[RMDB]
RNA sequence: GGGAACGACUCGAGUAGAGUCGAAAACUUGCAUUCAUGCAUCUAAUGGCUGCAGAGCAGGAUGUCGGAAGCUGCUGGGUUCAGAUGCAUCUUAGAAAGUCUAAGGAUGGCCAGUGGUCUGAGGAACCCCUCGGUCCCGAUUCGUCGGGACCGAGGGAAAAGAAACAACAACAACAAC
Reactivity to 2A3 in 0.01 (KOAc 150mM, MgCl2 10mM, bicine 150mM(pH8.5), 24C), signal-to-noise 1, nucleotides 027 to 126: c040u000u070g000c000a110u070u110c050a110u060g000c060a030u000c000u000a120a000u070g300g000c050u110g030c030a090g000a040g010c150a080g040g040a080u040g040u110c090g000g040a020a020g070c050u000g000c000u000g000g000g010u130u000c110a000g000a100u150g000c000a070u000c000u000u150a280g030a250a300a000g070u030c000u000a020a020g050g030a110u000g090g000c010c000a000g000u000g070g000u000c000u050g000a000g010g030a150a040c000

The record gives the reactivity of an RNA of 177 nucleotides to 2A3.
Source: RMDB library OK1LIB, as collected in RNAgym.
For 2A3 the reverse transcriptase was SuperScript II with manganese.